[RMDB]
RNA sequence: GGGAACGACUCGAGUAGAGUCGAAAAGAAGUACAGUUCGCUGUACUUCAAAUUCCCACCACCGCCGCCGCGGCCGCCGCCUCCACCGCCGCCACCACCAAAAAAGCAUUUAGUUCGCUAAAUGCAAGAUGACAUAAACGUUCGCGUUUAUGUCAUCAAAAGAAACAACAACAACAAC
Reactivity to DMS in 0.01 (KOAc 150mM, MgCl2 10mM, bicine 150mM(pH8.5), 24C), signal-to-noise 2, nucleotides 027 to 126: g000a020a000g000u010a010c010a010g010u000u000c240g050c000u000g020u010a010c010u000u000c000a020a130a200u000u000c000c000c010a140c100c080a070c040c020g000c040c050g030c040c030g000c050g020g000c010c050g000c040c070g050c050c010u000c030c020a060c080c040g000c020c060g000c020c020a050c040c030a100c010c080a010a030a030a030a090a130g000c000a000u000u000u000a000g000u000u020c140g010c000u000a010a000a000u000g000c000a090a030